[RMDB]
RNA sequence: GGGAACGACUCGAGUAGAGUCGAAAAUGAGCAAGAAUCUUAUCCGACCCAGUGAUAUUAGGGCAGGAUUGCAAGACAUAGAAAUGGCAGAGGAUACAGUCAAUCUAGUGUAUCAAAAUCUAAUCAGAUUCAAGACGGUAUUCGUACCGUCUUGAAUAAAAGAAACAACAACAACAAC
Reactivity to DMS in 0.01 (KOAc 150mM, MgCl2 10mM, bicine 150mM(pH8.5), 24C), signal-to-noise 4, nucleotides 027 to 126: u020g010a080g010c060a070a040g010a120a060u000c020u000u000a080u000c020c020g000a260c030c010c020a120g020u010g000a090u000a100u010u010a090g010g000g040c200a080g000g000a050u010u010g010c100a060a020g020a060c110a050u010a040g000a040a080a060u010g000g000c060a060g020a160g010g000a050u010a030c050a070g010u000c090a050a110u000c100u000a070g010u000g010u000a030u000c080a050a070a050a080u000c080u000a060a130u010c140a070g010
Reactivity to 2A3 in 0.01 (KOAc 150mM, MgCl2 10mM, bicine 150mM(pH8.5), 24C), signal-to-noise 3, nucleotides 027 to 126: u100g010a020g050c040a080a010g030a150a100u040c030u090u060a020u000c040c010g050a040c050c000c010a050g030u070g190a090u080a100u180u210a060g000g030g000c030a010g020g020a030u020u040g030c030a040a040g050a030c020a050u090a010g140a050a090a050u060g020g000c000a000g040a060g090g060a030u030a030c020a010g080u100c030a030a030u030c060u100a040g080u000g010u040a000u060c040a020a080a050a050u040c040u070a050a060u090c040a020g000